[RMDB]
RNA sequence: GGGAACGACUCGAGUAGAGUCGAAAAGAAGGAACCAUGUCCGAGGACGAUUUCAUUGAGGAGGCCAAGGUGAUGACCAAGCUGCAGCAUCCAAAUCUUGUGCAGCUAUAUGGCGUCUGCUCCAAGCGGAACCUACAAUGUUCGCAUUGUAGGUUCCAAAAGAAACAACAACAACAAC
Reactivity to DMS in 0.01 (KOAc 150mM, MgCl2 10mM, bicine 150mM(pH8.5), 24C), signal-to-noise 3, nucleotides 027 to 126: g010a150a100g000g040a120a170c060c070a060u000g020u010c010c030g010a100g000g000a070c080g010a160u000u030u000c090a080u000u000g000a040g010g000a090g010g040c050c070a110a060g010g050u000g000a110u000g000a090c030c040a080a080g000c000u010g010c030a020g000c030a040u040c060c110a110a100a070u030c100u010u000g030u010g030c020a010g010c000u000a040u010a280u000g010g020c060g020u000c040u010g020c040u000c040c060a060a090g000c240
Reactivity to 2A3 in 0.01 (KOAc 150mM, MgCl2 10mM, bicine 150mM(pH8.5), 24C), signal-to-noise 1, nucleotides 027 to 126: g110a030a060g130g030a000a050c000c030a040u080g040u000c010c010g030a060g070g000a030c060g030a040u000u180u100c100a070u050u200g120a040g050g020a010g020g000c020c020a030a050g060g040u080g050a040u080g100a100c000c030a010a000g010c000u000g020c000a080g000c020a060u060c030c020a070a150a140u110c100u110u120g020u020g020c000a000g000c020u040a030u020a020u040g020g000c010g040u010c030u030g070c030u040c010c040a040a020g070c070